[RMDB]
RNA sequence: GGGAACGACUCGAGUAGAGUCGAAAAGGCCUCCUGGUGCUUACCACAGGCUGUGUUCUUACACUGACUGUAUAGAAAGAGGAGGUAGAGUAAACCUACCCCAUAUACACCUCAGCUCAGGCCCUGUGAUUUUCAUGUCAUUCGUGACAUGAAAAUCAAAAGAAACAACAACAACAAC
Reactivity to 2A3 in 0.01 (KOAc 150mM, MgCl2 10mM, bicine 150mM(pH8.5), 24C), signal-to-noise 5, nucleotides 027 to 126: g040g020c010c000u040c000c030u060g040g030u070g100c070u090u120a050c050c030a000c040a000g000g030c020u000g010u020g010u080u130c080u110u140a020c020a010c010u010g060a010c010u000g020u040a050u030a050g160a060a140a020g130a080g020g020a090g010g000u010a020g010a020g060u140a040a080a050c010c000u070a070c010c000c000c010a010u040a000u010a120c020a040c020c000u030c020a020g020c030u040c050a030g050g000c010c000c000u060g030u030
Reactivity to DMS in 0.01 (KOAc 150mM, MgCl2 10mM, bicine 150mM(pH8.5), 24C), signal-to-noise 3, nucleotides 027 to 126: g000g010c010c010u000c050c060u000g000g000u010g000c040u040u010a070c160c210a040c150a040g000g000c050u010g000u000g000u010u010c190u010u040a070c050a050c010u000g000a010c050u000g000u000a080u020a100g000a090a120a100g010a110g020g000a020g000g010u000a010g000a110g000u020a070a060a170c090c000u000a110c000c010c010c010a130u010a080u050a080c060a040c100c020u000c060a060g000c080u010c070a060g000g000c000c000c020u000g010u000